The data come from the RNA Mapping Database (RMDB), library TTRINS. Chemical mapping of a 177-nucleotide RNA with 2A3 and DMS. For 2A3, 4,090 sequencing reads were counted.
RNA sequence: GGGAACGACUCGAGUAGAGUCGAAAAGAUAUGGACUUUCCAAAUACGUGACCACGAUACUACCCACCCAAAUGCUCGGAAACGAGCACUUGGAGGUAUUAUCAACGUAUUUGGAAAGUCCUAAGUCGAAAUAGUAAUCCUUCGGGAUUACUAUUUCAAAAGAAACAACAACAACAAC
Reactivity to 2A3 in 0.01 (KOAc 150mM, MgCl2 10mM, bicine 150mM(pH8.5), 24C), signal-to-noise 2, nucleotides 027 to 126: g110a090u190a100u210g000g000a000c010u000u040u000c000c000a020a020a010u020a000c010g020u040g300a260c140c120a190c300g020a010u020a030c000u020a010c010c000c070a240c100c040c000a010a040a000u010g010c010u000c000g040g000a070a130a140c010g030a000g040c000a010c000u000u010g010g000a000g010g020u000a000u040u000a000u020c010a010a010c010g000u000a000u000u010u000g000g000a020a000a000g010u000c000c000u000a000a000g030u030c030
Reactivity to DMS in 0.01 (KOAc 150mM, MgCl2 10mM, bicine 150mM(pH8.5), 24C), signal-to-noise 4, nucleotides 027 to 126: g010a090u000a300u000g000g010a000c000u000u000u010c000c000a000a020a000u000a000c000g030u000g010a220c300c300a150c280g010a010u000a020c060u000a010c010c000c040a200c300c000c000a010a000a010u000g000c000u010c000g010g000a080a090a220c000g000a010g000c000a000c040u000u000g000g010a050g010g000u010a010u000u000a000u000c000a180a030c000g020u000a000u000u000u000g000g000a000a000a000g020u000c000c000u000a010a060g020u010c090
The DMS profile rests on 3,607 reads. The reactions ran in a buffer of 150 mM KOAc, 10 mM MgCl2 and 150 mM bicine (pH 8.5), at 24 C.